The record gives the reactivity of an RNA of 177 nucleotides to DMS and 2A3. Conditions: 150 mM KOAc, 10 mM MgCl2 and 150 mM bicine (pH 8.5), 24 C. 2A3 adducts were read by reverse transcription with SuperScript II with manganese.
RNA sequence: GGGAACGACUCGAGUAGAGUCGAAAAUCUUGUGGUUCCUGUGGUACACCUCCGAAGGCCGCCUAGGCGAGAAGAGAGUAAAUAGAGGAGAGAGCUUACCUGGGUUCCCUGGCAGCGCUGCAACGGAGUAAACUAUGAUCUUCGGAUCAUAGUUUACAAAAGAAACAACAACAACAAC
Reactivity to DMS in 0.01 (KOAc 150mM, MgCl2 10mM, bicine 150mM(pH8.5), 24C), signal-to-noise 3, nucleotides 027 to 126: u000c040u000u010g020u000g020g000u000u010c010c020u010g010u010g010g000u010a060c120a110c080c020u020c030c000g030a150a230g010g000c020c050g010c100c080u000a090g020g000c020g010a040g010a100a090g000a100g000a110g000u000a050a050a100u010a080g010a100g020g000a070g020a100g000a090g000c050u000u010a030c020c010u000g000g000g010u000u000c020c010c000u010g010g000c070a020g000c040g000c060u000g000c050a050a060c080g000g000a200
Reactivity to 2A3 in 0.01 (KOAc 150mM, MgCl2 10mM, bicine 150mM(pH8.5), 24C), signal-to-noise 1, nucleotides 027 to 126: u050c010u040u140g070u130g090g000u010u100c000c000u040g040u040g080g000u040a030c020a040c010c000u000c020c010g030a080a040g100g000c020c020g000c040c060u110a050g070g000c050g080a050g010a140a030g070a000g030a030g060u140a020a090a070u130a080g090a030g060g030a040g010a000g000a000g070c030u030u060a060c000c030u020g030g000g020u040u040c010c000c020u010g020g000c010a080g020c020g000c050u050g000c010a010a060c030g020g010a050